The record gives the reactivity of an RNA of 307 nucleotides to 2A3. The reactions ran in a buffer of 150 mM KOAc, 10 mM MgCl2 and 150 mM bicine (pH 8.5), at 24 C. The 2A3 profile rests on 3,930 reads. 2A3 is a SHAPE reagent: it acylates the 2'-hydroxyl of flexible nucleotides of all four kinds.
RNA sequence: GGGAACGACUCGAGUAGAGUCGAAAAGAUCCGCUACGGCGGAUCAAGUAUCCGGUGACGGAUACACAUAGUCCGUUCGCGGACUAUGAGCAUGAUCGUGAGAUCAUGCAAGAAGCUCUCUACGGAGAGCUUCACAUUAACUUCGGUUAAUGAAGAGCAGUCUACGGACUGCUCAGACCACGCGUGAGCGUGGUCACCUUGUCGUUCGCGACAAGGAGAGAUCGGUGACGAUCUCAAAGUCUAAUUUGUCGGGCUGAGACAAAUCUACCGCACUGUUCGCAGUGCGGAAAAGAAACAACAACAACAAC
Reactivity to 2A3 in 0.01 (KOAc 150mM, MgCl2 10mM, bicine 150mM(pH8.5), 24C), signal-to-noise 3, nucleotides 027 to 266: g010a000u010c010c010g000c010u050a080c300g180g000c000g000g000a000u000c010a010a000g010u000a000u000c000c000g010g040u050g030a020c020g000g000a000u000a000c010a000c000a020u000a010g000u020c020c010g040u030u080c300g040c010g130g000a000c000u000a010u000g020a020g000c000a000u000g010a000u010c010g030u050g090a090g000a040u010c010a000u010g000c000a000a080g000a000a000g000c000u000c000u000c010u030a040c300g080g010a000g000a000g010c010u010u000c010a000c000a000u010u010a000a010c000u030u040c180g130g000u010u010a000a000u060g140a130a100g000a000g010c000a000g000u000c000u040a060c300g120g010a000c000u000g000c000u000c000a000g000a000c010c000a000c000g020c000g040u060g080a050g000c000g010u010g000g010u000c000a000c000c000u000u000g010u000c010g020u030u080c280g040c000g140a000c000a000a000g000g000a000g000a000g000a000u000c000g000g070u100g080a060c020g000a000u000c010u000c000a030a030a010g000u000c010u020a030a040u010u010u020g030u020c030g030g050g130c280u120g070a050g010a230c000a010a030a020u090c020u100a050